RNA sequence: GGGAACGACUCGAGUAGAGUCGAAAAGAUUUGUACCGUCUAUGAGCACAUUAUCCUAGAUGUCGCCACAAUUAGACUGCGGCGGAGAACAGUGCUAGCAGCGACUUACUGCGCGAACAUUGUCGUGGCGUCUAACCAGGUUCGCCUGGUUAGACGCAAAAGAAACAACAACAACAAC
Reactivity to DMS in 0.01 (KOAc 150mM, MgCl2 10mM, bicine 150mM(pH8.5), 24C), signal-to-noise 2, nucleotides 027 to 126: g000a130u040u000u000g010u020a050c110c080g020u020c090u010a060u020g000a190g010c100a040c030a020u000u000a060u010c040c030u030a120g000a110u020g000u000c060g010c010c020a010c110a060a080u000u010a090g020a200c080u000g000c050g000g040c060g010g000a110g010a170a060c170a020g000u000g000c020u040a260g000c090a100g040c030g010a100c240u000u010a120c100u010g010c050g060c010g010a040a110c070a150u010u000g030u000c060g000u020g000
Reactivity to 2A3 in 0.01 (KOAc 150mM, MgCl2 10mM, bicine 150mM(pH8.5), 24C), signal-to-noise 1, nucleotides 027 to 126: g010a050u080u080u090g050u080a080c000c030g010u000c010u120a100u120g080a000g060c030a000c000a080u020u070a100u210c000c000u070a020g000a170u040g000u040c040g000c000c000a080c020a050a000u220u050a080g000a070c040u030g020c070g070g000c000g050g050a150g100a060a040c040a080g010u060g070c000u010a040g000c040a030g040c000g000a010c010u080u140a010c000u080g050c110g000c010g030a020a000c070a080u080u180g010u070c050g010u000g050